[RMDB]
RNA sequence: GGGAACGACUCGAGUAGAGUCGAAAAGUGCCUCGUCGGCCCGGCAUGCCAACCUGAUCCGAAGUUCAAGGUGGUUUCUCUGGCCUUCCAGAGAGAUGCGCGUCGGAAGAACUGACGAACAAACCUUAAAACAAAACGACGUUCGCGUCGUUUUGAAGAAUGAUCUGGACUUCGGUCCAGAUCAUUCAAAAGAAACAACAACAACAAC
Reactivity to 2A3 in 0.01 (KOAc 150mM, MgCl2 10mM, bicine 150mM(pH8.5), 24C), signal-to-noise 1, nucleotides 027 to 156: g070u040g020c000c020u040c000g040u000c010g000g000c040c000c000g000g000c010a030u130g060c020c020a050a050c040c000u000g000a010u050c010c050g050a130a090g070u010u080c070a040a010g000g020u000g000g010u030u050u010c000u000c000u020g000g030c150c020u250u040c010c000a000g020a000g000a000g040a100u130g030c050g000c040g020u020c010g000g020a050a050g020a120a030c000u000g020a010c000g050a030a050c080a060a080a040c010c000u230u260a080a120a010a030c020a000a000a000a000c000g010a010c000g030u020u170c270g000c030g070u000c000g040u000u000u000u010g000a020a010
Chemical mapping of a 207-nucleotide RNA with 2A3.
It was measured as part of the RMDB library M2RFPK.